[RMDB]
RNA sequence: GGGAACGACUCGAGUAGAGUCGAAAAGCGUACUACUCGCAUGGAGUUGCGAAGAACUAUGGUCUCUAGCGUGAACGCUCCCAAAUAGGAGCGUUUCGGGCCAUAGGGAGCAAUGAGGUGCGAGUAUCGCAAAGCGAAGGACUUCGGUCCUUCGCAAGGUGCAAUACGUGUUCGCACGUAUUGCACCAAAAGAAACAACAACAACAAC
Reactivity to 2A3 in 0.01 (KOAc 150mM, MgCl2 10mM, bicine 150mM(pH8.5), 24C), signal-to-noise 1, nucleotides 027 to 156: g020c020g100u150a110c040u000a000c000u020c000g000c000a020u030g080g050a060g000u000u000g040c040g130a300a000g010a080a000c000u000a030u000g050g000u000c080u020c050u140a210g080c060g180u200g080a000a000c010g000c020u060c010c000c000a200a300a100u300a080g000g000a000g000c000g000u030u070u040c010g000g000g000c010c000a000u000a000g000g000g000a030g020c000a000a000u120g020a000g100g000u020g000c000g030a000g000u000a000u030c000g000c000a000a000a170g010c000g000a000a000g010g020a000c000u040u030c300g130g010u000c000c010u010u000c000g000c000a000a030